[RMDB]
RNA sequence: GGGAACGACUCGAGUAGAGUCGAAAAAGGCACACUUCUAUAUCAUUUUACAAACAGAGUGACAGAGAGGUUGACCUCUGAGCUCUGUUAGUGAACGCAGAGCUUACAGGUCAAGCGUUGUAAGAACUGCGUUCAUAGUUCUGUGAAUGCUGUGCCACAUGCUGCAUCCAUUCGUGGAUGCAGCAUGAAAAGAAACAACAACAACAAC
Reactivity to 2A3 in 0.01 (KOAc 150mM, MgCl2 10mM, bicine 150mM(pH8.5), 24C), signal-to-noise 1, nucleotides 027 to 156: a000g000g000c000a000c020a010c020u000u070c060u060a190u060a090u200c100a070u050u160u050u110a100c140a030a060a010c000a000g090a010g030u050g260a150c000a010g070a000g030a120g080g100u060u090g140a170c000c000u000c020u000g000a010g030c000u010c000u010g000u000u000a060g000u060g040a000a000c010g020c000a010g030a030g060c000u000u000a000c000a080g050g080u140c050a050a030g180c080g090u100u020g050u040a010a000g000a070a040c010u000g000c040g000u010u000c000a000u020a010g050u120u000c030u030g080u080g010a060a040u040g000c050u000g000u000g030c000c000a000
The record gives the reactivity of an RNA of 207 nucleotides to 2A3. Values cover nucleotides 27 to 156. It was measured as part of the RMDB library OK3TST. For 2A3, 536 sequencing reads were counted.